An RNA of 177 nucleotides, treated with 2A3 and DMS and read out base by base. The reactions ran in a buffer of 150 mM KOAc, 10 mM MgCl2 and 150 mM bicine (pH 8.5), at 24 C.
[RMDB]
RNA sequence: GGGAACGACUCGAGUAGAGUCGAAAACUUCGCCCUCUUCUGCAAGGCGAACGGCAUCCGUGAGUCGGCGCUCACCACCGUGCUGAGCAGCGCCAUCGGGCCUGAGGGACUCGACACCUCGCUGGACGGACUUACCAACAUUCGUGUUGGUAAGUCCAAAAGAAACAACAACAACAAC
Reactivity to 2A3 in 0.01 (KOAc 150mM, MgCl2 10mM, bicine 150mM(pH8.5), 24C), signal-to-noise 2, nucleotides 027 to 126: c010u070u020c020g060c030c020c010u000c040u210u020c090u010g080c060a040a040g030g000c030g030a070a030c050g030g000c080a050u040c020c000g010u030g030a030g040u110c200g080g040c090g000c020u000c020a020c010c000a090c020c060g030u070g000c070u010g010a020g020c010a010g020c000g020c030c010a080u110c060g000g010g010c030c020u030g050a100g000g020g060a130c040u020c040g000a010c020a050c040c010u050c030g030c070u040g000g030a040c020
Reactivity to DMS in 0.01 (KOAc 150mM, MgCl2 10mM, bicine 150mM(pH8.5), 24C), signal-to-noise 2, nucleotides 027 to 126: c170u000u010c050g000c000c000c040u000c100u010u020c050u010g020c190a060a210g010g000c000g000a030a050c060g010g010c120a070u020c040c160g000u010g010a050g020u010c050g000g020c090g000c000u000c070a040c040c100a070c090c100g040u010g030c090u000g000a290g000c020a030g040c200g000c030c030a110u000c020g000g000g010c030c070u020g000a100g020g000g020a130c110u010c050g010a090c160a030c060c010u000c040g000c070u000g010g020a220c210